This 177-nucleotide RNA was probed chemically with DMS. It was measured as part of the RMDB library TTRINS. For DMS the reverse transcriptase was MarathonRT.
[RMDB]
RNA sequence: GGGAACGACUCGAGUAGAGUCGAAAAGAUAUGGAGCACUCCCCACCUAAGGGUGUCGAUGAACUACUUCGAAAGGGUCGGAAACGACCCUGAGAAGCAUCGACACCCUUAGAGGUGCUCCUAAGUCCUUACGAUAGAACUUCGGUUCUAUCGUAAGAAAAGAAACAACAACAACAAC
Reactivity to DMS in 0.01 (KOAc 150mM, MgCl2 10mM, bicine 150mM(pH8.5), 24C), signal-to-noise 3, nucleotides 027 to 126: g040a160u000a140u000g000g010a010g000c000a000c030u000c210c030c020c050a300c090c000u000a000a040g020g000g030u000g000u000c020g000a020u000g010a140a030c100u020a300c000u000u000c000g010a260a080a000g010g010g010u010c010g020g000a090a140a220c010g000a020c000c000c020u020g000a300g010a020a000g010c000a030u000c000g010a030c000a010c000c000c000u000u000a000g010a080g010g000u000g000c000u000c000c000u020a020a140g020u010c130